Structure probing data (2A3) for a 207-nucleotide construct.
[RMDB]
RNA sequence: GGGAACGACUCGAGUAGAGUCGAAAAGAGUAUGAAGGCGCUGGGCUUCGUACUACAUUUGACCUCAAUGACAUUGAUAACACCUACAUACUUGAGGGUGAUGUAGAAAUCCUAAUGUCUCCGACAAUGCUAGACGGGGUUACGGAUAUGCCGCAGCUAGUCUGGCUAGUUUCGACUAGCCAGACUAAAAAGAAACAACAACAACAAC
Reactivity to 2A3 in 0.01 (KOAc 150mM, MgCl2 10mM, bicine 150mM(pH8.5), 24C), signal-to-noise 1, nucleotides 027 to 156: g050a000g090u110a080u070g050a110a040g090g030c030g040c040u000g050g000g000c000u000u020c000g030u000a020c000u000a000c000a020u050u030u050g220a100c000c000u050c080a070a020u130g090a090c060a110u220u000g060a210u250a140a080c040a040c080c070u120a030c000a020u100a080c000u020u000g000a010g120g000g060u010g040a000u040g000u000a020g010a060a010a010u090c010c010u000a080a000u170g000u000c050u040c040c000g060a110c100a030a070u120g070c080u110a030g000a150c000g000g000g000g000u000u050a000c000g000g010a010u000a060u040g000c000c000g040c040a000g080c000